[RMDB]
RNA sequence: GGGAACGACUCGAGUAGAGUCGAAAAACUUUACCACACUGCCCCUGACACAAAAUGACUUUGAGUUGUUGGGUGUGUUAGUCUUGGAUGUUUUCUGUGUCAUGGGAUCAGAUCUCAACAAUUGUGAGCUUAAUGCCGUAUUCGUACGGCAUUAAGCAAAAGAAACAACAACAACAAC
Reactivity to 2A3 in 0.01 (KOAc 150mM, MgCl2 10mM, bicine 150mM(pH8.5), 24C), signal-to-noise 1, nucleotides 027 to 126: a000c030u110u050u090a170c000c010a120c050a040c020u020g000c030c000c000c000u020g010a000c000a000c010a010a160a090a080u200g020a020c000u030u150u160g120a060g000u030u050g070u010u000g040g030g010u120g020u030g050u060u060a050g000u000c000u050u150g130g010a070u050g150u140u020u020u040c090u030g020u020g020u000c000a050u090g010g050g000a050u060c040a000g040a060u060c050u000c020a090a100c040a050a120u180u160g100u020g080a040
Reactivity to DMS in 0.01 (KOAc 150mM, MgCl2 10mM, bicine 150mM(pH8.5), 24C), signal-to-noise 2, nucleotides 027 to 126: a090c150u000u000u000a150c050c050a090c180a160c050u000g010c090c000c000c010u000g000a010c040a000c000a010a060a060a030u010g000a070c030u010u000u010g020a170g010u000u000g010u000u010g000g020g000u000g010u000g020u000u000a050g020u000c020u010u030g030g020a110u000g000u010u000u000u000c080u000g030u000g000u000c030a000u000g010g000g000a090u030c030a050g000a200u000c000u000c020a030a100c160a060a090u000u000g000u000g000a210